The data come from the RNA Mapping Database (RMDB), library RFMREP.
This 177-nucleotide RNA was probed chemically with DMS and 2A3.
The reactions ran in a buffer of 150 mM KOAc, 10 mM MgCl2 and 150 mM bicine (pH 8.5), at 24 C.
2A3 adducts were read by reverse transcription with SuperScript II with manganese.

RNA sequence: GGGAACGACUCGAGUAGAGUCGAAAACUGAUGGAGUUCGCUCCAUCAGAAAUCCCUGUUGACGGAAUGAACGGAAUUCAGUAGCGAUAACUGAGCAGGGAAAAACCCGUCGUGUUCGCACGACGGGCAUAAAUGUUAGGUUCGCCUAACAUUUAUGAAAAGAAACAACAACAACAAC
Reactivity to DMS in 0.01 (KOAc 150mM, MgCl2 10mM, bicine 150mM(pH8.5), 24C), signal-to-noise 8, nucleotides 027 to 126: c000u000g000a010u000g000g000a020g020u000u010c230g020c000u000c000c000a000u000c000a010g000a050a110a110u000c000c000c000u000g010u000u000g000a030c010g000g000a150a160u000g020a300a160c010g000g000a040a220u000u000c000a010g000u000a020g000c020g000a090u000a020a010c010u000g000a020g000c010a020g000g000g010a020a080a060a090a180c000c000c000g010u000c000g020u000g000u000u010c190g010c000a010c000g000a010c000g000g000g010
Reactivity to 2A3 in 0.01 (KOAc 150mM, MgCl2 10mM, bicine 150mM(pH8.5), 24C), signal-to-noise 3, nucleotides 027 to 126: c000u000g000a000u000g000g010a010g020u060u070c100g120c050u000c000c000a000u000c000a000g000a000a010a010u020c000c000c000u010g040u070u030g010a010c010g000g090a300a300u040g000a050a010c020g000g010a010a020u040u010c000a000g000u000a000g010c010g000a030u010a030a020c000u010g000a000g000c000a000g000g000g000a080a020a000a010a020c000c000c000g000u000c000g000u010g020u030u090c220g010c110a000c020g010a000c000g000g010g000